Conditions: 150 mM KOAc, 10 mM MgCl2 and 150 mM bicine (pH 8.5), 24 C. This 177-nucleotide RNA was probed chemically with DMS and 2A3. The 2A3 profile rests on 1,509 reads. Reactivities are rounded to 0.1 and cut off at 0 and 3. For DMS, 5,003 sequencing reads were counted.
RNA sequence: GGGAACGACUCGAGUAGAGUCGAAAAUGGACCGUCCAGGAAUCAAGCUGGCUGGAUUGGCGAGACAACGACGUGGGAGUGGGUGCGAUGCUCUACGACAGUGGCUCCGCUUUUGUGAGUGUCGACAUACCCUGGAGUGAUUCGUCACUCCAGGGUAAAAAGAAACAACAACAACAAC
Reactivity to DMS in 0.01 (KOAc 150mM, MgCl2 10mM, bicine 150mM(pH8.5), 24C), signal-to-noise 3, nucleotides 027 to 126: u030g010g010a120c020c000g020u030c020c020a060g000g000a120a070u000c120a070a080g000c020u000g010g000c040u000g000g020a020u020u070g030g000c060g010a130g020a080c120a110a100c120g010a030c080g030u000g010g030g010a050g010u010g020g020g010u030g020c000g000a050u010g010c000u000c030u010a030c040g020a120c270a010g010u000g020g000c040u020c040c000g010c030u000u020u000u010g010u000g000a080g000u000g010u000c010g000a100c270a140
Reactivity to 2A3 in 0.01 (KOAc 150mM, MgCl2 10mM, bicine 150mM(pH8.5), 24C), signal-to-noise 2, nucleotides 027 to 126: u110g040g020a050c000c010g040u000c000c000a030g000g100a020a070u130c070a080a030g060c050u080g070g060c030u000g030g030a030u000u170g040g000c030g010a050g010a020c050a030a000c070g160a010c040g020u110g000g030g000a080g040u070g000g070g030u060g040c010g000a020u030g000c000u010c020u090a060c020g030a050c020a020g020u050g100g000c060u000c010c000g060c010u070u000u020u080g060u020g030a050g050u020g020u040c020g050a030c000a010